[RMDB]
RNA sequence: GGGAACGACUCGAGUAGAGUCGAAAAGGGGUGCACUCCGAGUCCCUGAGCUGGUCGACGUCCAGCUCCUUCGGGACCACGCUGCUCUGGGCGGAAGAUUCUUCUGACACUUCUAGCCUAUUCAGCUCGUUAUUGCCAAGUUCGCUUGGCAAUAACGAAAAGAAACAACAACAACAAC
Reactivity to 2A3 in 0.01 (KOAc 150mM, MgCl2 10mM, bicine 150mM(pH8.5), 24C), signal-to-noise 1, nucleotides 027 to 126: g000g030g000g010u010g000c030a000c170u020c030c010g020a050g020u000c030c000c000u040g010a010g000c020u010g080g020u090c150g220a220c150g110u080c010c000a010g040c000u040c000c000u100u170c030g000g000g000a020c000c010a080c080g030c010u000g000c010u010c000u010g000g010g000c020g000g030a010a020g030a070u110u000c050u220u040c140u210g030a010c020a000c030u020u030c000u020a060g000c000c000u000a000u050u080c000a000g010c000u000
Reactivity to DMS in 0.01 (KOAc 150mM, MgCl2 10mM, bicine 150mM(pH8.5), 24C), signal-to-noise 1, nucleotides 027 to 126: g000g020g010g000u000g020c250a170c090u010c040c040g030a160g010u000c010c000c010u000g010a020g030c000u000g000g050u030c050g040a190c220g010u000c020c000a010g010c000u000c030c070u000u010c210g030g000g000a040c080c130a070c160g000c010u000g020c000u000c010u000g000g000g030c010g000g000a010a010g000a210u010u010c050u010u040c190u010g010a110c200a090c000u000u000c030u000a110g060c000c000u010a020u000u000c010a030g010c010u000
This 177-nucleotide RNA was probed chemically with 2A3 and DMS.
For DMS the reverse transcriptase was MarathonRT.
The reactions ran in a buffer of 150 mM KOAc, 10 mM MgCl2 and 150 mM bicine (pH 8.5), at 24 C.